Record summary
Structure probing data (2A3 and DMS) for a 177-nucleotide construct. Conditions: 150 mM KOAc, 10 mM MgCl2 and 150 mM bicine (pH 8.5), 24 C. Reactivities are rounded to 0.1 and cut off at 0 and 3. For 2A3 the reverse transcriptase was SuperScript II with manganese. It was measured as part of the RMDB library OK1LIB. Values cover nucleotides 27 to 126. For DMS, 6,683 sequencing reads were counted.
RNA sequence: GGGAACGACUCGAGUAGAGUCGAAAAUGAUUGUGUCAAUAUGAUGAGGCGGAAAUGUUUAUAUUGAUGCAGAUUAACAUAAUCCUAACCUUUCAUAGUUAUGAGUGCACAUUAUGCAGUAAGAUUCAUCGCCUAUUACUUUCGAGUAAUAGGCGAUAAAAGAAACAACAACAACAAC
Reactivity to 2A3 in 0.01 (KOAc 150mM, MgCl2 10mM, bicine 150mM(pH8.5), 24C), signal-to-noise 5, nucleotides 027 to 126: u170g030a040u040u100g000u010g020u040c000a020a030u030a000u020g050a020u060g000a000g040g060c050g040g000a000a180a020u070g020u020u020u010a040u000a030u000u120g130a060u110g000c060a010g110a170u050u050a040a000c010a010u070a070a050u040c000c010u000a020a060c000c000u020u040u040c050a040u020a040g060u030u160a120u240g150a100g140u090g020c010a010c000a010u020u150a050u190g040c020a020g020u100a090a050g050a100u100u080c030
Reactivity to DMS in 0.01 (KOAc 150mM, MgCl2 10mM, bicine 150mM(pH8.5), 24C), signal-to-noise 4, nucleotides 027 to 126: u020g010a040u010u010g010u010g010u000c010a040a070u010a000u000g010a050u060g020a030g020g000c040g030g020a040a120a050u010g010u020u000u010a010u020a040u020u030g000a140u010g000c170a050g010a060u020u020a020a070c020a060u010a100a140u000c010c020u010a090a090c060c020u000u000u020c030a010u000a050g020u010u040a090u030g010a100g000u030g010c020a040c070a040u000u000a040u010g000c100a070g030u020a050a070g010a080u010u020c100